RNA sequence: GGGAACGACUCGAGUAGAGUCGAAAAUUGCUUGGCGAUCUCAGCAUCCAUUCCUGGGCCACCGAUUUGGCCUAAGAAUUCGACGACGGUAACUUCUGCGCCCAAUCGGGACCAUACAGAGGCCUAAUUUAUGUGUCAGUGCGCUUUAGUCCAACCAAAUUGGAAUCUUGUUCGCAAGAUUCCAAUUAAAAGAAACAACAACAACAAC
Reactivity to 2A3 in 0.01 (KOAc 150mM, MgCl2 10mM, bicine 150mM(pH8.5), 24C), signal-to-noise 4, nucleotides 027 to 156: u060u050g010c030u030u050g030g020c030g050a090u040c050u010c060a000g020c010a060u030c060c010a060u050u040c000c020u030g000g010g000c020c020a040c030c020g060a020u050u010u060g000g000c020c000u030a060a010g030a030a080u140u110c050g070a070c070g030a030c080g190g040u060a070a040c020u030u040c040u070g050c030g000c010c010c000a000a010u010c000g030g020g030a030c030c000a010u080a130c110a040g140a030g080g050c010c010u040a060a040u040u090u060a080u090g090u010g020u020c030a040g020u050g110c000g000c000u060u050u040a030g010u060c030c030a050a050c080c010a010
Reactivity to DMS in 0.01 (KOAc 150mM, MgCl2 10mM, bicine 150mM(pH8.5), 24C), signal-to-noise 2, nucleotides 027 to 156: u000u010g010c010u010u000g010g000c010g030a110u000c040u010c030a160g050c050a090u000c030c060a130u000u000c030c030u010g020g010g020c000c020a080c060c020g020a280u000u000u010g040g040c020c020u010a030a030g030a030a080u010u000c060g010a110c070g030a130c070g020g020u000a050a080c040u000u000c030u010g020c140g010c030c000c060a050a090u010c060g000g020g020a050c020c030a100u010a150c100a110g010a140g020g030c000c020u020a030a150u000u010u000a040u010g020u010g000u000c030a080g030u000g010c020g020c030u010u000u000a100g010u010c040c030a070a120c060c020a050